Structure probing data (2A3 and DMS) for a 177-nucleotide construct. For DMS the reverse transcriptase was MarathonRT. As a SHAPE reagent, 2A3 marks flexible, mostly unpaired nucleotides at the ribose 2'-OH.
RNA sequence: GGGAACGACUCGAGUAGAGUCGAAAACGUCGUGAACUAGCGACAAUGCAUUAGGUCCAUCGUUAUCUAACCGAAACAUCGUGACUAGUAAUAGAAUAGAACCACGAGAGGGCGCUGGCAAACAAAGACGCAGGGUAUUAUUCGUAGUACCCUGCGUAAAAGAAACAACAACAACAAC
Reactivity to 2A3 in 0.01 (KOAc 150mM, MgCl2 10mM, bicine 150mM(pH8.5), 24C), signal-to-noise 9, nucleotides 027 to 126: c050g010u010c010g010u030g080a120a090c080u030a100g010c010g020a010c020a020a060u090g010c030a050u050u110a040g000g030u010c020c010a060u040c070g030u030u060a100u080c080u070a050a080c040c020g050a090a040a020c040a090u030c020g040u040g080a080c030u020a020g080u110a030a120u060a120g120a080a030u060a060g030a060a030c100c000a000c020g030a030g030a070g050g020g000c030g000c020u000g010g010c010a010a050a010c040a030a110a020g100
Reactivity to DMS in 0.01 (KOAc 150mM, MgCl2 10mM, bicine 150mM(pH8.5), 24C), signal-to-noise 9, nucleotides 027 to 126: c120g000u010c030g020u010g010a150a130c130u020a090g000c030g000a050c050a110a080u020g020c070a070u020u010a070g010g000u000c030c030a090u010c070g010u010u010a090u020c070u020a090a100c100c050g000a080a080a090c080a100u010c020g010u010g000a100c020u000a020g000u030a090a110u030a070g020a100a100u020a030g000a080a090c100c030a020c010g000a030g000a090g000g000g010c020g010c020u000g000g010c040a060a090a070c130a050a080a080g010
For 2A3 the reverse transcriptase was SuperScript II with manganese.